[RMDB]
RNA sequence: GGGAACGACUCGAGUAGAGUCGAAAAACCCCUUCAGCGAACAGAAGAGCCCCGCACGGGAUAGGAGUAAGACCAUAGCGAUGGGGGGAGAUGCUAGGAGUUGGGGGAGACCGAAGCGAGGAGGAAAUCUAAUACUUAUGUUCGCAUAAGUAUUAGAAAAAGAAACAACAACAACAAC
Reactivity to DMS in 0.01 (KOAc 150mM, MgCl2 10mM, bicine 150mM(pH8.5), 24C), signal-to-noise 3, nucleotides 027 to 126: a080c040c010c010c100u000u010c030a070g030c030g000a150a070c040a110g000a060a080g010a220g000c080c030c010c060g010c090a070c080g000g000g000a100u000a060g000g010a080g020u020a080a100g000a130c050c020a050u000a100g020c060g000a070u010g010g010g010g010g000g020a060g010a070u010g030c060u010a060g000g010a160g000u010u010g010g010g010g000g010a100g000a100c070c030g000a070a060g020c050g010a050g000g000a070g000g000a090a070a110
Reactivity to 2A3 in 0.01 (KOAc 150mM, MgCl2 10mM, bicine 150mM(pH8.5), 24C), signal-to-noise 2, nucleotides 027 to 126: a000c030c010c000c000u070u080c020a040g050c010g050a060a020c010a040g100a140a020g020a120g030c020c000c000c040g120c030a040c050g000g080g020a030u150a100g060g000a030g020u100a100a070g060a060c000c000a030u060a030g080c020g100a180u110g020g010g000g030g020g000a010g000a020u130g000c020u020a050g000g040a040g040u090u070g010g010g000g000g000a030g030a010c030c000g010a000a010g020c020g000a010g010g010a010g000g040a030a090a010

Conditions: 150 mM KOAc, 10 mM MgCl2 and 150 mM bicine (pH 8.5), 24 C. This 177-nucleotide RNA was probed chemically with DMS and 2A3. Source: RMDB library 15KREP, as collected in RNAgym. The DMS profile rests on 2,485 reads.